The record gives the reactivity of an RNA of 177 nucleotides to DMS and 2A3. Conditions: 150 mM KOAc, 10 mM MgCl2 and 150 mM bicine (pH 8.5), 24 C.
RNA sequence: GGGAACGACUCGAGUAGAGUCGAAAAUUUUCUGUGGAAUUCCUUAAUCCAUACUAGUUCAUGUAUCCUUUUUCAAAUUGAUGAACGUAUUAGUCUAUGUAGAGAUGAGUGAUUUUGACAAGGAUAAUCACUAUACCGAGUUCGCUCGGUAUAGUGAAAAAGAAACAACAACAACAAC
Reactivity to DMS in 0.01 (KOAc 150mM, MgCl2 10mM, bicine 150mM(pH8.5), 24C), signal-to-noise 2, nucleotides 027 to 126: u010u000u000u000c050u010g030u000g000g020a040a130u000u010c060c010u000u010a090a170u000c010c010a060u000a080c140u010a070g000u000u000c050a100u000g000u010a060u010c020c040u000u000u000u010u010c170a040a050a060u010u000g010a040u010g000a060a020c110g020u000a080u000u010a160g010u010c070u000a040u010g020u030a090g000a120g010a040u000g000a120g010u010g000a070u000u010u000u000g010a060c300a010a050g000g000a060u010a040a100
Reactivity to 2A3 in 0.01 (KOAc 150mM, MgCl2 10mM, bicine 150mM(pH8.5), 24C), signal-to-noise 1, nucleotides 027 to 126: u000u040u000u000c050u050g030u060g020g030a050a060u060u070c030c000u000u030a140a060u000c000c000a000u030a080c040u080a000g040u000u060c040a040u020g060u090a090u080c000c000u050u070u020u050u290c110a230a170a190u100u190g060a090u120g010a060a050c020g000u060a190u010u130a040g010u000c000u040a050u220g170u080a010g000a020g040a300u120g010a020g090u020g060a040u010u070u030u030g000a000c040a040a000g080g000a000u040a140a100